The record gives the reactivity of an RNA of 177 nucleotides to 2A3 and DMS.
RNA sequence: GGGAACGACUCGAGUAGAGUCGAAAAAGCGCUUUAUAAUCAAUACGAAUUAAUCGAAAAACGUACAAAAGCGAACGUGCAUACGAUUAGACCAGGUGUGACAGGACUAGCUCAAGUGAUGGGGAGACUAGGCAAGGAGGUUCGCCUCCUUGCCUAGAAAAGAAACAACAACAACAAC
Reactivity to 2A3 in 0.01 (KOAc 150mM, MgCl2 10mM, bicine 150mM(pH8.5), 24C), signal-to-noise 2, nucleotides 027 to 126: a000g030c040g000c030u090u040u040a110u220a040a200u000c210a150a110u030a130c000g030a110a090u020u080a040a000u070c000g060a050a080a080a080a020c090g050u140a060c140a140a210a170a000g040c040g020a140a100c110g040u050g000c040a030u100a120c000g060a090u090u180a040g020a030c000c000a000g030g020u000g040u000g030a010c000a000g010g020a020c070u100a000g060c010u020c080a130a020g080u040g030a040u000g000g000g000g120a120g110a020
Reactivity to DMS in 0.01 (KOAc 150mM, MgCl2 10mM, bicine 150mM(pH8.5), 24C), signal-to-noise 2, nucleotides 027 to 126: a050g000c040g050c040u000u020u000a180u030a050a120u000c200a040a150u000a100c080g010a060a070u020u010a010a090u030c080g050a130a180a040a110a190c050g000u000a050c110a010a020a020a030g000c000g060a020a070c060g060u040g040c130a130u000a080c030g000a010u000u000a020g000a120c000c000a030g000g000u000g050u010g000a030c070a100g010g020a130c040u000a130g030c080u030c020a050a070g010u000g000a100u000g020g000g000g000a200g000a110

High DMS reactivity at an A or C suggests that its Watson-Crick edge is free. For 2A3 the reverse transcriptase was SuperScript II with manganese. For DMS the reverse transcriptase was MarathonRT.